[RMDB]
RNA sequence: GGGAACGACUCGAGUAGAGUCGAAAACUUCCUAGGUGGAGCGGGGGUGUCGUGGACCAGCGAGGGUGGCGCGCUGCGUUGACGCGGUGCUCUGCUUGGCUGUGUGUCGGUGUGGCCUGCCCCCCUGUAGAGGGGUGUCGUAGGCUACCCGUUGAAGCUCAGAAUACCUGUUCGCAGGUAUUCUGAGAAAAGAAACAACAACAACAAC
Reactivity to 2A3 in 0.01 (KOAc 150mM, MgCl2 10mM, bicine 150mM(pH8.5), 24C), signal-to-noise 1, nucleotides 027 to 156: c040u060u040c000c000u040a150g090g000u050g040g000a020g040c040g000g050g010g010g030u080g010u030c040g040u040g090g060a060c030c040a010g000c010g040a090g080g000g070u020g000g040c030g000c000g030c020u060g000c050g030u040u220g070a090c010g030c010g010g070u000g020c030u000c000u020g070c060u050u010g060g000c050u000g060u020g000u020g130u190c030g030g020u090g000u000g130g020c010c000u000g000c000c000c000c020c000c000u120g080u090a300g110a060g130g000g000g040u090g040u140c060g010u030a000g000g000c000u010a000c000c000c000g010u000u100g040a050a010g030

Description
This 207-nucleotide RNA was probed chemically with 2A3. Conditions: 150 mM KOAc, 10 mM MgCl2 and 150 mM bicine (pH 8.5), 24 C. For 2A3 the reverse transcriptase was SuperScript II with manganese. Reactivities are given for positions 27 through 156. Source: RMDB library ARCHII, as collected in RNAgym.